[RMDB]
RNA sequence: GGGAACGACUCGAGUAGAGUCGAAAAGAUAUGGACCUUGUAGUUGCUACACUACCCACCUUAGACUGAAAGCUCGGAAACGAGCUUUCAGUCUAAGAGGUGUAGGCACUCUAUGGGUCCUAAGUCAGUUACUAAUCAACUUCGGUUGAUUAGUAACAAAAGAAACAACAACAACAAC
Reactivity to DMS in 0.01 (KOAc 150mM, MgCl2 10mM, bicine 150mM(pH8.5), 24C), signal-to-noise 3, nucleotides 027 to 126: g020a030u010a300u010g000g000a010c000c010u000u000g060u010a020g010u010u010g000c010u000a030c010a010c010u000a100c060c070c120a300c120c000u000u000a000g000a020c010u010g010a040a000a010g040c000u000c000g000g010a080a110a260c010g000a000g010c000u000u000u000c000a020g000u000c010u000a000a010g000a050g020g000u000g010u000a020g000g000c010a010c080u000c030u010a060u020g000g010g000u000c010c000u000a020a090g020u000c060a150